[RMDB]
RNA sequence: GGGAACGACUCGAGUAGAGUCGAAAACUGUCGCUCCUCGAUUGAAAAGCAGGUCUGCAAUGCAGGCGCCAUUCUCCGGUUGAGAAACGCCGGGAAAGUUUCCUGAUCGGGCACCGGUUCGAAGCCGGGCUACUAUCGACUUCGGUCGAUAGUAGCCAAAAGAAACAACAACAACAAC
Reactivity to 2A3 in 0.01 (KOAc 150mM, MgCl2 10mM, bicine 150mM(pH8.5), 24C), signal-to-noise 1, nucleotides 027 to 126: c040u040g000u030c030g000c010u010c000c000u030c000g070a050u010u260g010a100a160a030a000g000c080a050g090g090u010c020u010g010c010a090a100u240g000c020a000g030g000c030g000c010c010a050u050u000c040u020c020c000g000g060u060u040g050a030g080a070a100a010c060g040c010c000g000g010g060a050a080a050g030u040u010u070c000c000u060g030a150u060c040g010g010g000c050a030c040c010g020g000u050u060c050g090a090a010g000c040c000g000